[RMDB]
RNA sequence: GGGAACGACUCGAGUAGAGUCGAAAAUUAUUUUAUUUGCCUUUUCUACAAAUAUGCUAACAGCUGCGUCAAGUGGUAGGCAUACUUGUUGGACACUACUGAUGUGAGAAUAGCAAGCUACCAAAUGAGUAAUAUAAUCGUUCGCGAUUAUAUUACUAAAAGAAACAACAACAACAAC
Reactivity to 2A3 in 0.01 (KOAc 150mM, MgCl2 10mM, bicine 150mM(pH8.5), 24C), signal-to-noise 4, nucleotides 027 to 126: u030u010a060u010u160u040u080a120u050u040u040g010c010c000u060u070u040u020c010u030a040c020a020a080a030u070a020u060g000c010u040a100a110c040a170g010c000u020g010c030g080u120c110a180a090g010u000g030g020u040a050g020g040c010a010u030a040c020u030u060g010u050u050g060g050a010c020a000c040u140a060c070u140g100a120u110g100u010g050a110g050a090a030u030a030g030c010a010a020g020c030u060a040c040c000a020a040a130u190g030
Reactivity to DMS in 0.01 (KOAc 150mM, MgCl2 10mM, bicine 150mM(pH8.5), 24C), signal-to-noise 5, nucleotides 027 to 126: u000u000a050u020u000u000u010a070u020u020u000g010c020c040u000u000u000u000c020u000a070c030a010a040a040u000a020u000g010c000u000a080a110c190a140g010c030u000g020c050g010u000c160a100a110g020u000g010g020u000a100g010g010c030a020u000a040c070u010u000g010u000u000g010g000a160c070a010c030u010a290c150u010g000a060u000g020u000g010a110g000a050a070u000a060g000c030a020a040g010c100u000a120c040c030a030a090a090u010g010